[RMDB]
An RNA of 207 nucleotides, treated with DMS and 2A3 and read out base by base. The reactions ran in a buffer of 150 mM KOAc, 10 mM MgCl2 and 150 mM bicine (pH 8.5), at 24 C. DMS adducts were read by reverse transcription with MarathonRT. For 2A3 the reverse transcriptase was SuperScript II with manganese.
RNA sequence: GGGAACGACUCGAGUAGAGUCGAAAACAGACGGCUGGGCCGGUGAAUGCUGGCCUCAAAGGCUGAUGGCCCAGAAGCCCUGUCAUCUGGAAAUCCCCAUUUGCCGUGGGGUGUGGGACGUUCCUGGGGCGGUGAGCUGUCAGGGAGCACAGCGCAGCUGUAAGUUUUGUUUCGACAAAACUUACAGAAAAGAAACAACAACAACAAC
Reactivity to DMS in 0.01 (KOAc 150mM, MgCl2 10mM, bicine 150mM(pH8.5), 24C), signal-to-noise 3, nucleotides 027 to 156: c020a110g010a050c040g030g010c030u000g010g010g070c020c020g040g010u000g010a150a100u010g030c020u010g010g000c010c020u010c080a050a100a100g030g000c040u010g020a150u000g040g000c000c070c010a110g000a240a100g020c000c000c020u000g020u000c010a060u010c030u010g000g000a110a140a100u010c010c010c000c020a110u000u010u010g020c120c170g000u000g040g010g000g020u000g000u000g000g010g020a090c060g030u000u000c010c010u000g000g010g020g020c060g000g020u010g010a090g030c010u010g020u000c040a120g000g010g000a120g040c080a070c020a060g040c040g020c030a160g010
Reactivity to 2A3 in 0.01 (KOAc 150mM, MgCl2 10mM, bicine 150mM(pH8.5), 24C), signal-to-noise 4, nucleotides 027 to 156: c010a010g090a020c020g040g030c020u040g000g010g010c020c010g090g040u110g100a140a060u300g040c030u040g010g010c000c000u030c030a110a120a020g060g000c010u030g030a110u060g070g000c010c020c000a010g030a040a010g010c000c000c000u010g030u030c020a090u030c020u020g020g020a030a070a080u060c010c010c010c010a030u090u080u150g070c040c040g030u050g000g030g000g000u030g020u050g000g000g010a040c060g000u030u030c020c020u010g000g000g020g000c020g000g040u090g020a050g010c000u020g050u090c010a030g040g020g050a060g050c040a000c010a060g030c050g000c040a070g030